[RMDB]
RNA sequence: GGGAACGACUCGAGUAGAGUCGAAAAAAAAGAUAUGGAUAUGGAGUAGCUCAGCUUCACGACGAAGCAAAUCGGAAACGAUUUGCAGAGUGAAGGCUGAGCGCAGAUACCAUAUCCUAAGUCAAAAUCAAAUCAUAGAGUUCGCUCUAUGAUUUGAAAAAGAAACAACAACAACAAC
Reactivity to 2A3 in 0.01 (KOAc 150mM, MgCl2 10mM, bicine 150mM(pH8.5), 24C), signal-to-noise 2, nucleotides 027 to 126: a000a000a030a050g080a050u120a050u140g000g000a000u000a000u020g000g000a040g030u070a030g050c000u020c000a010g010c010u010u010c010a010c020g300a080c070g010a160a000g000c000a020a000a010u000c000g020g010a100a070a060c020g000a020u010u000u010g000c000a010g000a000g000u000g000a010a010g230g050c000u000g000a000g000c000g000c000a000g000a030u090a080c000c000a000u000a000u000c000c000u000a140a020g060u030c030a010a020a030a260
Reactivity to DMS in 0.01 (KOAc 150mM, MgCl2 10mM, bicine 150mM(pH8.5), 24C), signal-to-noise 2, nucleotides 027 to 126: a060a040a100a110g000a030u000a300u010g000g000a010u010a000u000g000g000a120g020u010a070g020c000u000c000a000g010c010u000u000c000a000c020g010a230c250g010a130a170g000c000a010a000a000u000c000g000g000a170a100a200c000g000a000u000u010u000g010c000a040g010a140g000u000g000a020a010g020g010c000u000g020a000g000c010g010c090a030g010a080u000a050c000c000a000u000a000u000c000c000u000a030a110g000u000c040a070a070a130a110
Chemical mapping of a 177-nucleotide RNA with 2A3 and DMS. The RNA was probed in 150 mM KOAc, 10 mM MgCl2 and 150 mM bicine (pH 8.5) at 24 C. For 2A3 the reverse transcriptase was SuperScript II with manganese. For DMS, 3,969 sequencing reads were counted.